[RMDB]
This 177-nucleotide RNA was probed chemically with DMS and 2A3.
DMS adducts were read by reverse transcription with MarathonRT.
Values cover nucleotides 27 to 126.
It was measured as part of the RMDB library OK2TST.
RNA sequence: GGGAACGACUCGAGUAGAGUCGAAAAUUUCACGCGAGAAGGCCACGGCAUUGCACUCUCGCUGUUGAGCGACGCCCAGGUCGAUGCACUGCUCAAUGAUCCGAAUCUGGUCGUCGAGCACUGCUCGGCGACGAUUAUCCUUCGGGAUAAUCGUCGCAAAAGAAACAACAACAACAAC
Reactivity to DMS in 0.01 (KOAc 150mM, MgCl2 10mM, bicine 150mM(pH8.5), 24C), signal-to-noise 9, nucleotides 027 to 126: u000u000u000c020a030c060g010c010g010a020g000a040a080g000g010c020c190a120c170g020g010c130a210u010u010g010c040a070c040u000c010u000c010g010c010u000g020u010u000g010a030g020c170g010a060c140g010c030c000c010a120g010g010u000c010g000a080u010g010c010a020c110u000g000c030u000c050a040a050u010g000a030u000c020c070g010a110a130u010c110u010g000g010u000c000g020u000c030g000a020g000c020a030c090u000g010c010u000c070g010
Reactivity to 2A3 in 0.01 (KOAc 150mM, MgCl2 10mM, bicine 150mM(pH8.5), 24C), signal-to-noise 9, nucleotides 027 to 126: u050u060u030c020a000c010g010c010g010a010g010a060a050g050g000c040c040a090c120g150g010c210a170u090u240g010c030a040c060u010c000u010c010g000c040u050g030u050u110g020a030g020c040g040a030c040g040c000c000c000a010g050g060u050c020g010a030u160g020c020a020c050u040g000c010u020c040a030a060u060g010a050u070c050c040g110a150a210u110c120u120g010g000u010c000g000u000c010g000a000g000c020a020c020u030g000c010u020c040g050